[RMDB]
RNA sequence: GGGAACGACUCGAGUAGAGUCGAAAACGGAGCCUCUUAUUCCUAUGAUGACAAGGUGGCAGCUGCUGUCAGUGGUGACCCGUAUCGGUCGGACGGCGUCUUGUAUAACACCCGUUGGGGCAACAUUCCAUAUUCUGUCCCAACCAAUGCUUUGGAAGUGGCUACUGCGUUUCGACGCAGUAGCCACAAAAGAAACAACAACAACAAC
Reactivity to 2A3 in 0.01 (KOAc 150mM, MgCl2 10mM, bicine 150mM(pH8.5), 24C), signal-to-noise 2, nucleotides 027 to 156: c000g040g010a000g010c010c000u050c040u120u170a090u120u000c000c010u030a040u060g030a020u030g030a020c010a010a060g020g000u010g010g030c000a000g010c000u040g010c000u010g020u010c010a100g070u040g110g070u050g040a010c000c010c000g040u120a060u220c070g000g010u010c000g010g000a000c000g000g000c000g010u010c000u050u070g010u020a140u020a120a030c010a020c000c040c000g010u010u000g010g000g030g000c000a000a010c010a110u130u120c090c010a040u030a080u200u100c060u010g000u000c020c000c000a000a000c000c000a020a060u110g040c010u060u090u030g000g000a000a000
Source: RMDB library OK3TST, as collected in RNAgym.
The record gives the reactivity of an RNA of 207 nucleotides to 2A3.